[RMDB]
RNA sequence: GGGAACGACUCGAGUAGAGUCGAAAAACAAAUAUGUGUUCCCCAAGCGUGCUGGCAUUGCACCAUUUUUCCAAUUGACCGUGGCCAGCAUGACGUUCUUCUAUCUGAUCAACUACUCCAAGUUGAAGUAGGCUAUUUAGUUCGCUAAAUAGCCUACAAAAGAAACAACAACAACAAC
Reactivity to 2A3 in 0.01 (KOAc 150mM, MgCl2 10mM, bicine 150mM(pH8.5), 24C), signal-to-noise 3, nucleotides 027 to 126: a010c040a010a100a020u300a100u220g080u040g030u020u000c000c000c020c000a110a050g040c010g000u000g000c000u000g020g000c030a050u040u300g030c060a030c050c000a060u060u050u000u070u060c060c040a080a080u020u130g070a110c030c090g020u060g080g030c000c000a000g000c010a010u010g010a000c020g060u040u010c010u140u010c010u050a150u040c030u040g060a080u050c000a000a020c000u030a010c010u000c060c030a110a010g010u010u010g030a040a020
Reactivity to DMS in 0.01 (KOAc 150mM, MgCl2 10mM, bicine 150mM(pH8.5), 24C), signal-to-noise 3, nucleotides 027 to 126: a040c040a050a120a120u000a100u010g020u000g010u000u000c020c010c010c300a090a090g010c030g020u010g000c010u000g000g010c040a110u000u000g020c040a110c070c070a080u000u000u000u020u020c100c120a070a100u000u010g000a060c110c050g010u020g030g030c040c000a000g000c000a000u000g000a180c050g020u000u000c040u000u000c120u010a080u050c080u010g010a140u000c010a000a010c010u000a100c200u010c170c180a070a040g000u000u000g010a060a120
Notes
The record gives the reactivity of an RNA of 177 nucleotides to 2A3 and DMS. Reactivities are rounded to 0.1 and cut off at 0 and 3. For 2A3 the reverse transcriptase was SuperScript II with manganese. The RNA was probed in 150 mM KOAc, 10 mM MgCl2 and 150 mM bicine (pH 8.5) at 24 C. For DMS, 1,596 sequencing reads were counted. It was measured as part of the RMDB library RFMREP.